[RMDB]
RNA sequence: GGGAACGACUCGAGUAGAGUCGAAAAAUACCGUGAGCAAUACGAAUGAGUACAUCAAAUACAUCGUCUCCUAUGGAUCAGAACGUAUUUGAUCCACAAGCUGCUGCUCAGGCACGUGAUCGCCGUAUAAUUAUGACCGGUUCGCCGGUCAUAAUUAAAAAGAAACAACAACAACAAC
Reactivity to DMS in 0.01 (KOAc 150mM, MgCl2 10mM, bicine 150mM(pH8.5), 24C), signal-to-noise 3, nucleotides 027 to 126: a120u020a160c070c010g050u010g020a060g000c040a010a110u010a040c140g010a110a080u010g010a130g030u000a110c250a080u010c040a020a070a040u010a050c050a040u000c040g010u020c070u000c090c120u010a140u010g010g010a020u000c090a070g000a040a090c200g000u000a060u000u010u000g000a000u000c070c020a060c110a030a090g020c120u000g030c080u000g010c050u000c050a090g000g000c070a050c140g000u000g000a090u000c050g020c040c030g010u000a130
Reactivity to 2A3 in 0.01 (KOAc 150mM, MgCl2 10mM, bicine 150mM(pH8.5), 24C), signal-to-noise 2, nucleotides 027 to 126: a010u190a070c000c040g060u030g020a030g000c030a070a070u030a070c070g080a060a140u100g060a020g080u060a040c030a050u120c040a020a030a030u130a010c000a030u060c060g030u000c020u060c050c040u240a170u250g020g000a010u030c020a030g030a210a020c060g050u050a050u060u010u030g010a030u000c000c030a050c000a040a020g020c050u060g040c000u010g000c010u040c000a010g020g040c000a010c120g070u050g020a010u050c040g000c010c000g070u190a070